[RMDB]
RNA sequence: GGGAACGACUCGAGUAGAGUCGAAAACUUCGUGGGCGGAGCGCGGCCUGCCCAGAGUGCCUUCUAGAUCCUGGGUCAGGCGCCAAGCUCCCCAGCAUCAUGCAGGAAGCUGCAGCCCCGCAGAGUUAUAAAGGAACAUUUUCGAAUGUUCCUUUAUAAAAGAAACAACAACAACAAC
Reactivity to 2A3 in 0.01 (KOAc 150mM, MgCl2 10mM, bicine 150mM(pH8.5), 24C), signal-to-noise 7, nucleotides 027 to 126: c030u070u050c050g040u190g010g020g000c050g030g020a050g010c060g000c050g090g140c010c010u000g000c000c000c000a000g010a030g010u120g090c010c050u190u200c040u090a070g030a120u060c010c000u000g000g000g020u220c060a000g010g010c010g020c020c010a030a010g000c000u000c010c000c000c000a010g010c000a040u220c000a010u160g060c010a010g030g070a120a020g030c010u030g000c010a030g010c020c000c000c000g010c050a040g010a000g060u030u010
Reactivity to DMS in 0.01 (KOAc 150mM, MgCl2 10mM, bicine 150mM(pH8.5), 24C), signal-to-noise 7, nucleotides 027 to 126: c030u000u000c070g030u010g000g010g030c100g010g000a040g000c050g010c260g010g000c020c000u000g010c010c000c000a020g000a110g020u030g020c140c090u020u040c210u030a100g000a070u010c060c000u000g000g000g000u030c040a010g000g020c030g000c070c130a070a300g000c010u000c010c000c210c050a090g000c040a100u020c150a120u030g000c050a100g000g010a080a070g010c010u000g000c030a170g010c030c010c010c020g000c090a050g010a090g020u010u000